[RMDB]
RNA sequence: GGGAACGACUCGAGUAGAGUCGAAAAGCACUUCAACCGCUCGAUCGAGACGGAUCUGUCGCUGGUCAUGGACCCGAUCAGGCAGGGCUUCAUGCGCACGAAUGUGAUGUGGCCGAAAGGCUCGGCGAUCGUCGACGGCUACAAUGUCGCCGGGCAGGAAAGGUCAAGUUUUCGAACUUGACCUUUCAAAAGAAACAACAACAACAAC
Reactivity to 2A3 in 0.01 (KOAc 150mM, MgCl2 10mM, bicine 150mM(pH8.5), 24C), signal-to-noise 2, nucleotides 027 to 156: g030c070a070c060u120u080c050a060a040c000c040g000c020u000c020g140a210u060c020g000a010g050a050c080g010g050a090u000c020u080g020u020c020g050c110u070g000g060u010c000a050u070g050g010a030c070c010c000g020a040u010c030a030g090g000c020a040g000g010g010c080u000u010c000a010u030g070c020g020c050a010c020g140a150a100u150g000u040g040a070u050g070u000g050g010c000c000g050a090a050a000g120g010c000u000c000g000g000c000g000a050u130c030g050u040c030g030a040c000g020g010c000u090a030c080a120a220u280g000u000c000g010c000c010g010g000g010c020a000g130
Description: Conditions: 150 mM KOAc, 10 mM MgCl2 and 150 mM bicine (pH 8.5), 24 C. The record gives the reactivity of an RNA of 207 nucleotides to 2A3. 2A3 adducts were read by reverse transcription with SuperScript II with manganese. It was measured as part of the RMDB library OK3TST.